RNA sequence: GGGAACGACUCGAGUAGAGUCGAAAAUGGCCCCACCUCAACGGGUCAGGUUUGGGUGCCGAUUAGUUGAGGUGCCGUUUCCCCAACGCCGAUGAGGGGGACGAAAGAAAUAUCGGCUGGUUUGGCUAAAUUAGGCCGGCAAAAGCUAGCCAGACAACCUGCUUUACUGGUUCGCCAGUAAAGCAGGAAAAGAAACAACAACAACAAC
Reactivity to 2A3 in 0.01 (KOAc 150mM, MgCl2 10mM, bicine 150mM(pH8.5), 24C), signal-to-noise 1, nucleotides 027 to 156: u120g100g000c000c000c040c000a030c010c000u000c000a000a010c050g040g000g050u050c090a180g150g000u230u240u250g130g000g040u280g010c010c010g000a010u030u040a010g010u010u000g000a000g000g000u000g000c000c010g010u000u000u020c030c000c000c000a050a030c040g020c010c000g010a050u070g000a040g020g000g030g060g010a000c030g130a130a090a080g190a000a030a000u200a000u010c010g020g020c050u050g000g030u000u010u010g000g000c000u000a080a130a250u180u090a120g050g150c000c080g040g050c030a130a130a000a000g050c010u040a000g000c000c000a000g000a000c010a000a030
The data come from the RNA Mapping Database (RMDB), library ARCHII. The record gives the reactivity of an RNA of 207 nucleotides to 2A3. The RNA was probed in 150 mM KOAc, 10 mM MgCl2 and 150 mM bicine (pH 8.5) at 24 C.